[RMDB]
About this RNA
The record gives the reactivity of an RNA of 177 nucleotides to 2A3 and DMS.
RNA sequence: GGGAACGACUCGAGUAGAGUCGAAAAACUUUAUUUGAUAUUUCUUGACCUCUUAAACCAGUUACAACUAAUAUGCGCCAUAUAUUAAUUUGUGCACCAAUGUCAAUGAUGAUAGACAGUAAUAUGGUGUGUUACGGAUAUUCGUAUCCGUAACACAAAAAGAAACAACAACAACAAC
Reactivity to 2A3 in 0.01 (KOAc 150mM, MgCl2 10mM, bicine 150mM(pH8.5), 24C), signal-to-noise 1, nucleotides 027 to 126: a000c060u160u120u050a090u050u070u030g010a040u040a120u010u130u000c030u000u070g030a080c050c010u070c020u050u080a130a130a060c030c000a150g030u060u130a030c030a070a000c020u040a000a110u030a020u190g060c060g040c040c000a020u040a010u040a020u130u040a110a070u060u070u070g010u010g000c000a020c000c000a090a030u030g020u050c020a010a030u190g040a010u050g000a000u040a000g060a000c020a020g110u000a000a030u180a150u170g060g060
Reactivity to DMS in 0.01 (KOAc 150mM, MgCl2 10mM, bicine 150mM(pH8.5), 24C), signal-to-noise 1, nucleotides 027 to 126: a070c040u000u000u010a040u010u000u010g000a180u000a060u000u000u000c000u000u000g010a090c000c010u010c040u000u000a080a040a100c120c120a080g010u000u010a050c010a040a040c060u000a000a050u000a010u000g000c230g050c070c140a020u030a010u000a010u000u000a020a040u000u000u010g010u010g020c060a070c070c070a170a040u000g000u000c010a040a020u030g000a070u010g030a030u000a090g010a160c120a060g000u000a040a020u000a090u010g000g010
The DMS profile rests on 669 reads. The data come from the RNA Mapping Database (RMDB), library OK2TST. Conditions: 150 mM KOAc, 10 mM MgCl2 and 150 mM bicine (pH 8.5), 24 C. Reactivities are given for positions 27 through 126.